[RMDB]
RNA sequence: GGGAACGACUCGAGUAGAGUCGAAAAACUCAACCUCUGAACGGGCGGGAAGUUUGUCGGUACGUGGAUGGCAGGCAUCCGAAGACAAGCAAUGGGCAAGGUGUAUGGGGAGACUACCUUGACACCACCGACCAUUUACGUUCGCGUAAAUGGUCGGAAAAGAAACAACAACAACAAC
Reactivity to DMS in 0.01 (KOAc 150mM, MgCl2 10mM, bicine 150mM(pH8.5), 24C), signal-to-noise 1, nucleotides 027 to 126: a110c110u050c080a300a050c050c030u000c020u060g010a110a020c080g000g000g130c000g010g030g000a040a100g000u000u040u000g020u000c080g050g000u000a130c180g000u030g020g000a040u000g000g020c060a020g040g030c000a070u000c010c040g000a150a080g000a010c000a060a020g000c000a040a200u000g010g000g000c150a040a100g000g000u000g000u000a010u000g020g070g000g020a210g010a090c180u070a140c000c000u000u000g000a110c170a070c060c000a170
Reactivity to 2A3 in 0.01 (KOAc 150mM, MgCl2 10mM, bicine 150mM(pH8.5), 24C), signal-to-noise 3, nucleotides 027 to 126: a000c020u020c040a000a060c000c010u060c050u060g060a070a010c020g020g090g050c040g030g010g060a040a040g010u000u060u000g010u000c040g000g120u150a150c100g150u220g070g000a040u020g010g130c100a030g030g130c010a000u020c010c000g050a090a000g000a020c010a020a050g020c000a030a110u080g000g000g010c050a040a010g000g040u030g060u050a240u130g020g010g030g000a060g070a000c040u130a120c010c000u030u030g040a030c030a040c010c060a020
This 177-nucleotide RNA was probed chemically with DMS and 2A3. Values cover nucleotides 27 to 126. The DMS profile rests on 1,494 reads.